[RMDB]
RNA sequence: GGGAACGACUCGAGUAGAGUCGAAAACUGCGUACUAGGGAUGUUUAAUACUGAGCCGGUUUACAGUAACUUACGCAUACACUACAUGUAAACUAAACCGUAUUAGUGUUUUACAUUUGUAGUGCUAGGAUCUCUUAGUAUUCGUACUGGGAGAUCCAAAAGAAACAACAACAACAAC
Reactivity to DMS in 0.01 (KOAc 150mM, MgCl2 10mM, bicine 150mM(pH8.5), 24C), signal-to-noise 8, nucleotides 027 to 126: c030u010g000c120g020u000a010c030u010a020g000g010g000a040u010g010u010u020u010a020a020u000a020c010u000g000a050g010c070c010g000g000u000u000u000a020c160a080g000u010a080a070c120u020u020a070c150g000c130a080u020a130c150a070c080u020a050c080a070u010g000u010a030a080a100c170u010a020a040a030c040c030g010u010a060u010u000a020g010u010g010u010u010u000u000a010c000a020u010u010u010g000u000a010g010u000g000c060u020a140
Reactivity to 2A3 in 0.01 (KOAc 150mM, MgCl2 10mM, bicine 150mM(pH8.5), 24C), signal-to-noise 9, nucleotides 027 to 126: c020u060g020c030g010u010a010c010u030a030g030g010g050a010u010g020u020u030u030a050a030u040a020c010u010g020a010g050c030c010g020g010u010u010u020a050c050a030g020u050a100a050c040u070u110a040c080g040c060a040u110a100c130a040c060u190a040c040a100u110g010u050a030a070a020c010u010a010a020a020c030c020g020u040a060u030u040a020g010u010g030u020u010u000u010a010c010a020u010u010u050g300u030a000g000u000g010c020u030a040